Source: RMDB library M2PK90, as collected in RNAgym.
An RNA of 177 nucleotides, treated with DMS and read out base by base.

[RMDB]
RNA sequence: GGGAACGACUCGAGUAGAGUCGAAAAGUUGCCCGAGAAGAGAUCACACAGAUGAGACACAAGGAGCGAUGUCUCAUCACUUGGUUUUCGACAAGUGACGAGUCCUUCCCAAAAUCGCUCCAAUGAAAUACCACUUGCCAUUCGUGGCAAGUGGUAUAAAAGAAACAACAACAACAAC
Reactivity to DMS in 0.01 (KOAc 150mM, MgCl2 10mM, bicine 150mM(pH8.5), 24C), signal-to-noise 1, nucleotides 027 to 126: g000u000u010g010c190c010c000g000a040g060a240a130g000a110g000a050u010c060a050c140a090c090a090g000a020u010g010a050g000a010c000a030c250a070a060g050g000a000g000c020g010a020u000g000u000c000u000c000a000u000c000a100c060u000u000g020g010u010u010u010u010c010g010a010c020a030a090g010u010g010a090c050g010a020g000u000c000c170u000u000c000c000c000a120a020a040a060u010c000g030c000u000c010c000a190a040u000g040a110a070

Notes: The RNA was probed in 150 mM KOAc, 10 mM MgCl2 and 150 mM bicine (pH 8.5) at 24 C.